Structure probing data (2A3 and DMS) for a 177-nucleotide construct.
DMS adducts were read by reverse transcription with MarathonRT.
The DMS profile rests on 1,501 reads.
DMS (dimethyl sulfate) methylates the pairing face of unpaired adenines and cytosines.
Values cover nucleotides 27 to 126.
The data come from the RNA Mapping Database (RMDB), library OK2TST.
The 2A3 profile rests on 952 reads.
RNA sequence: GGGAACGACUCGAGUAGAGUCGAAAAACUGUGAGCUUAUCGGUUUUGUUACAACAGCAAGGCGUGAAUUACUUACGUGUUCAUGAUGUUGAAGCAAACCACAGGGUCUUAUCCGCAGCAGCAUGGCAUAUCCCCGCUAGUUCGCUAGCGGGGAUAUAAAAGAAACAACAACAACAAC
Reactivity to 2A3 in 0.01 (KOAc 150mM, MgCl2 10mM, bicine 150mM(pH8.5), 24C), signal-to-noise 1, nucleotides 027 to 126: a000c030u020g010u010g050a000g020c030u080u090a080u230c070g000g000u050u100u040u090g020u050u030a050c030a040a040c030a040g000c020a030a030g150g010c000g010u020g030a040a050u190u040a130c090u020u050a040c050g030u010g140u100u100c140a120u040g030a030u030g020u000u010g000a020a020g030c020a010a000a010c000c020a050c060a050g060g040g000u060c020u070u120a130u020c040c050g050c040a010g050c010a000g020c010a040u040g070g000c010
Reactivity to DMS in 0.01 (KOAc 150mM, MgCl2 10mM, bicine 150mM(pH8.5), 24C), signal-to-noise 2, nucleotides 027 to 126: a060c070u010g000u000g020a080g030c120u000u000a070u000c180g000g000u000u000u020u000g020u010u020a100c040a020a040c030a070g000c110a050a170g000g010c030g040u000g010a020a120u010u020a110c120u000u000a080c120g010u010g010u000u010c110a110u010g010a090u000g000u030u000g010a120a070g020c010a040a040a030c040c050a100c220a060g010g000g010u010c080u010u010a080u010c050c070g000c050a070g010c050a050g010c060a070u000g010g000c160